The record gives the reactivity of an RNA of 177 nucleotides to 2A3 and DMS. The reactions ran in a buffer of 150 mM KOAc, 10 mM MgCl2 and 150 mM bicine (pH 8.5), at 24 C. For DMS, 2,018 sequencing reads were counted. It was measured as part of the RMDB library OK2TRN. For 2A3, 555 sequencing reads were counted. Reactivities are given for positions 27 through 126. For 2A3 the reverse transcriptase was SuperScript II with manganese.
RNA sequence: GGGAACGACUCGAGUAGAGUCGAAAAGAGAGAUACUUCGACGGGUUUCAUUACAACCCAGGAGCCCGACGUUUGAUAGUUAAAGCAUGUUGUAUGUCAUUAUAUGGCUAUUUGGGUAUAAUGCUCAGCUUAUGUACGUUUUCGAACGUACAUAAGCAAAAGAAACAACAACAACAAC
Reactivity to 2A3 in 0.01 (KOAc 150mM, MgCl2 10mM, bicine 150mM(pH8.5), 24C), signal-to-noise 1, nucleotides 027 to 126: g080a000g010a000g000a000u050a080c040u050u070c030g030a020c000g020g000g000u050u010u020c030a020u030u300a030c030a090a140c040c010c020a010g050g000a000g000c000c000c030g000a040c040g060u100u070u240g180a240u170a050g080u150u180a140a040a000g080c040a020u110g060u070u190g000u200a080u120g010u040c010a000u000u260a100u040a060u110g120g020c040u100a160u190u100u050g050g000g040u040a000u030a030a160u080g020c000u040c000a000
Reactivity to DMS in 0.01 (KOAc 150mM, MgCl2 10mM, bicine 150mM(pH8.5), 24C), signal-to-noise 2, nucleotides 027 to 126: g020a040g020a160g000a100u020a040c040u000u000c040g010a130c030g010g000g000u020u000u000c070a100u010u000a150c130a110a150c040c020c040a200g030g000a030g000c010c000c020g000a080c070g030u010u010u010g000a090u000a020g010u000u000a080a080a100g010c070a070u000g020u020u010g000u000a050u010g000u010c050a090u000u000a060u000a130u010g000g000c030u000a070u000u000u000g010g010g000u000a030u010a070a070u020g020c010u020c010a160